[RMDB]
RNA sequence: GGGAACGACUCGAGUAGAGUCGAAAAGGGGCUCAAGUUCGCCACCGAGACCUAACGGCACGGGUAACACCGUGAUCCAGUAGGUUGGCAUUCUGUUCGGGUGGAAGCUCGGGUGAGAACUCGAGUGUACCACUUCAGUUUUCGAACUGAAGUGGUAAAAAGAAACAACAACAACAAC
Reactivity to 2A3 in 0.01 (KOAc 150mM, MgCl2 10mM, bicine 150mM(pH8.5), 24C), signal-to-noise 8, nucleotides 027 to 126: g030g000g020g000c040u060c110a070a080g070u130u130c060g030c020c020a100c020c030g010a030g010a020c010c000u020a080a020c030g000g000c000a000c000g020g000g000u020a020a010c020a010c040c000g000u010g000a010u060c000c010a040g050u020a010g020g000u020u040g050g010c050a070u130u010c040u100g070u060u050c030g040g010g010u060g020g040a110a020g010c000u000c000g000g000g010u030g030a090g020a030a010c000u000c000g000a000g000u060g020
Reactivity to DMS in 0.01 (KOAc 150mM, MgCl2 10mM, bicine 150mM(pH8.5), 24C), signal-to-noise 9, nucleotides 027 to 126: g010g000g000g010c050u010c100a080a090g010u020u010c080g010c020c010a110c100c070g010a170g010a030c000c000u000a060a070c030g000g000c000a010c000g000g000g000u000a110a150c210a260c000c000g010u000g000a080u030c000c000a160g010u000a010g000g010u000u000g010g010c080a070u020u010c060u000g010u010u010c070g010g010g010u010g010g000a100a170g000c000u010c000g000g000g010u000g000a230g000a130a030c000u000c010g000a010g010u000g010

This 177-nucleotide RNA was probed chemically with 2A3 and DMS. The RNA was probed in 150 mM KOAc, 10 mM MgCl2 and 150 mM bicine (pH 8.5) at 24 C.